[RMDB]
RNA sequence: GGGAACGACUCGAGUAGAGUCGAAAAAGUGCCGAGAGGGUAGAGGGAGCGGCGGGAUAGAGCCGCGCCUGGGUGGUAGCAGCGAUGACUUAACGGCGAUGAACACCGGGUACGAAACCUGCUACACUAUACCCAGAUGGUUCGCCAUCUGGGUAUAAAAAGAAACAACAACAACAAC
Reactivity to 2A3 in 0.01 (KOAc 150mM, MgCl2 10mM, bicine 150mM(pH8.5), 24C), signal-to-noise 4, nucleotides 027 to 126: a000g130u100g010c010c010g050a060g030a060g080g080g030u130a080g020a060g040g060g000a090g010c010g030g000c090g020g080g000a080u180a060g090a040g020c010c010g020c000g000c000c000u030g040g050g000u070g020g030u040a000g000c030a030g010c010g160a140u070g020a050c010u050u050a050a050c010g020g000c020g110a220u130g060a040a000c020a020c040c000g020g060g030u080a050c090g020a070a000a000c000c000u000g010c010u040a030c030a020c040
Reactivity to DMS in 0.01 (KOAc 150mM, MgCl2 10mM, bicine 150mM(pH8.5), 24C), signal-to-noise 6, nucleotides 027 to 126: a130g020u010g010c010c020g000a130g000a100g000g010g010u020a060g000a180g020g010g010a060g010c030g000g010c000g010g020g020a300u030a070g000a080g010c000c010g000c020g020c010c020u010g000g020g020u000g000g010u010a010g010c000a010g000c130g010a040u000g010a300c300u000u020a230a100c050g000g000c090g010a180u060g020a100a180c140a110c030c030g000g000g010u020a040c050g000a090a070a060c100c000u010g020c000u000a010c030a040c100
Background: Source: RMDB libraries RFM100 and RFMREP, as collected in RNAgym. Structure probing data (2A3 and DMS) for a 177-nucleotide construct. 2A3 adducts were read by reverse transcription with SuperScript II with manganese. For 2A3, 3,330 sequencing reads were counted. For DMS the reverse transcriptase was MarathonRT.